Structure probing data (2A3 and DMS) for a 177-nucleotide construct. For 2A3 the reverse transcriptase was SuperScript II with manganese. The reactions ran in a buffer of 150 mM KOAc, 10 mM MgCl2 and 150 mM bicine (pH 8.5), at 24 C. DMS adducts were read by reverse transcription with MarathonRT. Source: RMDB library OK2TRN, as collected in RNAgym. For DMS, 1,132 sequencing reads were counted.

RNA sequence: GGGAACGACUCGAGUAGAGUCGAAAAGCGACGAGCAGCCCACCGACCUGCACACCGCGCGCCUAGCGUUGUGCCAGGCCACCCGUCAGGUCAUCGCCAACGGGCUGGCGAUCAUCGGCGUCACCGCGCGUUGAUAAGCGUUCGCGCUUAUCAACGCAAAAGAAACAACAACAACAAC
Reactivity to 2A3 in 0.01 (KOAc 150mM, MgCl2 10mM, bicine 150mM(pH8.5), 24C), signal-to-noise 2, nucleotides 027 to 126: g020c030g110a130c070g040a040g060c040a040g000c000c030c030a020c000c040g050a040c010c010u010g070c020a000c000a000c040c010g020c010g000c020g040c040c080u080a030g000c000g050u060u030g040u090g010c010c010a010g060g000c010c010a010c010c010c000g030u020c050a160g000g000u090c100a130u090c140g020c000c000a030a040c050g000g000g030c040u020g020g000c000g030a080u100c040a030u040c020g080g020c030g060u110c020a050c070c050g040c010
Reactivity to DMS in 0.01 (KOAc 150mM, MgCl2 10mM, bicine 150mM(pH8.5), 24C), signal-to-noise 2, nucleotides 027 to 126: g010c040g020a040c050g010a180g010c040a110g020c010c020c030a190c140c110g030a090c000c020u000g010c060a030c030a070c080c040g000c020g030c200g020c140c130u010a120g030c000g010u000u000g000u010g000c070c130a040g010g000c020c030a180c040c050c000g000u000c010a100g020g030u000c100a050u000c130g000c010c030a090a070c080g000g000g020c140u010g020g010c010g010a070u010c160a050u000c040g000g020c010g040u000c040a210c090c050g000c110